[RMDB]
RNA sequence: GGGAACGACUCGAGUAGAGUCGAAAAUUGUCUGGAAAGACGACCUCCUAAUGAUAUAACGCGGAGCUGACGUAGGCAGUUGUCUAAUGUCAAUCGGUUUUAACUCAAGGUGAGCCUACCAUUCCGUUAUGCUUCCCCGAUUCGUCGGGGAAGCAUAAAAAGAAACAACAACAACAAC
Reactivity to 2A3 in 0.01 (KOAc 150mM, MgCl2 10mM, bicine 150mM(pH8.5), 24C), signal-to-noise 1, nucleotides 027 to 126: u120u080g000u000c000u000g160g030a130a090a090g000a000c000g000a030c000c000u060c000c000u040a030a060u200g050a000u000a140u040a030a210c300g050c010g300g090a020g040c000u040g000a010c000g060u000a000g000g000c000a260g070u240u290g110u150c000u000a030a030u020g010u070c000a000a000u020c080g010g000u000u090u090u090a060a070c000u000c060a000a000g150g000u070g020a000g040c000c000u000a040c000c000a000u000u000c000c000g020u000